[RMDB]
An RNA of 177 nucleotides, treated with DMS and 2A3 and read out base by base. Values cover nucleotides 27 to 126. For 2A3 the reverse transcriptase was SuperScript II with manganese. The DMS profile rests on 41,330 reads.
RNA sequence: GGGAACGACUCGAGUAGAGUCGAAAAGCUUAUCGGCGAUCCUUCGGUGGCCAAGUCGCAGCUACUGCGCUACGUCUUGAAUACGGCACCAAGGGCCAUACCGACAACGGGUCGCGGAUCCAGCGGCCCGUAGGUCUUCGUUCGCGAAGACCUACGGAAAAGAAACAACAACAACAAC
Reactivity to DMS in 0.01 (KOAc 150mM, MgCl2 10mM, bicine 150mM(pH8.5), 24C), signal-to-noise 9, nucleotides 027 to 126: g010c080u000u010a070u000c020g010g020c070g010a050u000c000c010u000u000c100g030g010u000g010g020c050c010a070a040g010u000c010g020c010a020g010c050u010a140c270u010g010c140g010c010u000a020c020g000u000c020u000u010g010a140a110u010a110c260g000g000c030a040c060c060a040a060g010g010g010c040c050a090u000a090c010c000g000a030c300a060a080c150g000g010g010u000c000g010c010g000g000a060u000c120c120a150g010c000g000g000c040
Reactivity to 2A3 in 0.01 (KOAc 150mM, MgCl2 10mM, bicine 150mM(pH8.5), 24C), signal-to-noise 9, nucleotides 027 to 126: g010c020u070u070a020u070c060g150g000c010g030a030u020c000c000u030u030c040g010g000u020g020g060c010c020a050a030g080u130c030g010c010a020g020c070u240a180c130u230g060c020g000c060u050a030c040g030u030c020u040u070g050a120a080u210a170c080g030g000c060a030c050c040a070a090g050g010g000c010c010a080u140a070c010c000g020a030c050a170a040c080g000g000g000u010c000g000c030g040g010a040u080c090c050a010g010c010g020g070c000